[RMDB]
Structure probing data (2A3 and DMS) for a 177-nucleotide construct. The reactions ran in a buffer of 150 mM KOAc, 10 mM MgCl2 and 150 mM bicine (pH 8.5), at 24 C. The DMS profile rests on 11,745 reads. It was measured as part of the RMDB library OK1LIB. For DMS the reverse transcriptase was MarathonRT. For 2A3 the reverse transcriptase was SuperScript II with manganese.
RNA sequence: GGGAACGACUCGAGUAGAGUCGAAAACAGUUGUCUCGAAACGCUUGUUGCCGUAAAAAUCACGUUCAUCGAGGAGUGAUGAAUCCACACUCGCCUCUACCAUGCGCCGAACCAUAAAACAAACAUAUCGUUAGUGUUAAUUCGUUAACACUAACGAAAAAGAAACAACAACAACAAC
Reactivity to 2A3 in 0.01 (KOAc 150mM, MgCl2 10mM, bicine 150mM(pH8.5), 24C), signal-to-noise 9, nucleotides 027 to 126: c060a030g040u090u060g030u050c010u010c040g060a100a070a030c020g010c070u070u100g060u100u080g070c040c020g020u080a090a030a030a030a080u090c050a030c060g060u070u040c030a050u060c060g060a070g050g040a060g070u090g030a100u050g040a040a060u040c040c000a030c010a010c030u010c020g030c010c010u030c000u020a060c020c010a030u060g000c010g030c010c020g050a060a040c030c020a050u210a120a130a030a020c120a030a100a020c040a070u200a050
Reactivity to DMS in 0.01 (KOAc 150mM, MgCl2 10mM, bicine 150mM(pH8.5), 24C), signal-to-noise 6, nucleotides 027 to 126: c140a080g000u000u000g010u000c040u000c060g010a080a130a100c060g000c050u000u010g010u000u000g000c010c020g020u010a020a050a060a070a070u010c050a050c040g020u020u010c040a060u010c070g010a110g000g000a110g010u030g010a090u010g000a050a040u020c050c060a070c040a050c040u000c030g010c050c010u020c030u010a040c080c020a030u000g010c050g000c010c020g010a060a080c070c020a060u040a050a050a060a070c220a060a100a090c270a030u040a070